[RMDB]
RNA sequence: GGGAACGACUCGAGUAGAGUCGAAAACGAUCUGUUCGCAGAUCGAGCUACGGAGACGUAGCAAAGCGAGCGAGGGCACGGGCGCUCGCACUACCGGAACUAAAUCCAUAUCCACGUGUGCUAGGAUAUGGCCGUGCCCAAAGAAACAGCACACGAACACUAGUGACUAGUUCGCUAGUCACUAGUGAAAAGAAACAACAACAACAAC
Reactivity to 2A3 in 0.01 (KOAc 150mM, MgCl2 10mM, bicine 150mM(pH8.5), 24C), signal-to-noise 4, nucleotides 027 to 156: c020g000a000u000c000u030g030u130u120c230g010c080a000g000a000u000c000g000a040g000c000u000a000c000g020g000a090g030a050c010g000u010a000g010c010a050a060a000g000c010g000a000g000c000g010a010g000g010g010c010a000c000g040g000g000c040g000c000u000c010g010c010a000c010u070a040c000c020g100g080a110a030c080u160a190a060a060u090c010c000a000u020a000u010c010c020a050c110g010u020g000u010g000c010u020a040g000g010a000u000a010u000g010g000c000c000g000u000g000c000c000c000a070a120a010g070a010a130a020c070a030g000c000a010c000a000c000g000a090a010
Reactivity to DMS in 0.01 (KOAc 150mM, MgCl2 10mM, bicine 150mM(pH8.5), 24C), signal-to-noise 1, nucleotides 027 to 156: c040g020a000u000c010u000g090u030u000c300g020c020a030g010a010u000c000g060a070g030c070u000a030c000g020g010a300g000a300c040g030u040a020g000c040a010a060a070g020c020g040a020g030c000g000a030g030g000g000c000a090c010g030g000g030c030g010c050u000c020g040c000a020c020u000a300c030c040g020g010a080a080c050u000a110a040a080u000c000c040a030u000a050u000c000c050a040c050g000u030g000u000g010c000u010a190g000g050a050u000a040u010g020g030c000c040g010u000g000c020c000c060a070a050a100g000a190a180a120c000a010g010c000a050c000a000c060g020a150a210